[RMDB]
RNA sequence: GGGAACGACUCGAGUAGAGUCGAAAAGAUAUGGAGCACACGUUAAUGGGUAUAUAGCGCGAAACUAUACUGUGUCGGAAACGACAUUAUAGGAGCUGCAUACCCAUUAACGUGUGCUCCUAAGUCAGAUGGAGGAUAACUUCGGUUAUCCUCCAUCAAAAGAAACAACAACAACAAC
Reactivity to DMS in 0.01 (KOAc 150mM, MgCl2 10mM, bicine 150mM(pH8.5), 24C), signal-to-noise 2, nucleotides 027 to 126: g000a060u010a300u000g020g000a030g010c020a010c000a020c030g000u000u000a000a000u010g010g020g000u010a020u000a020u000a040g020c020g020c220g000a200a110a250c010u000a010u010a020c300u010g030u020g030u000c020g000g010a130a110a250c000g010a040c000a000u000u000a010u000a000g010g000a130g040c000u000g050c090a030u000a000c000c000c010a030u000u000a020a020c000g000u000g010u000g000c000u000c000c000u000a020a040g010u000c070a160
This 177-nucleotide RNA was probed chemically with DMS. Reactivities are given for positions 27 through 126. The data come from the RNA Mapping Database (RMDB), library TTRINS. Reactivities are rounded to 0.1 and cut off at 0 and 3. DMS adducts were read by reverse transcription with MarathonRT. The RNA was probed in 150 mM KOAc, 10 mM MgCl2 and 150 mM bicine (pH 8.5) at 24 C.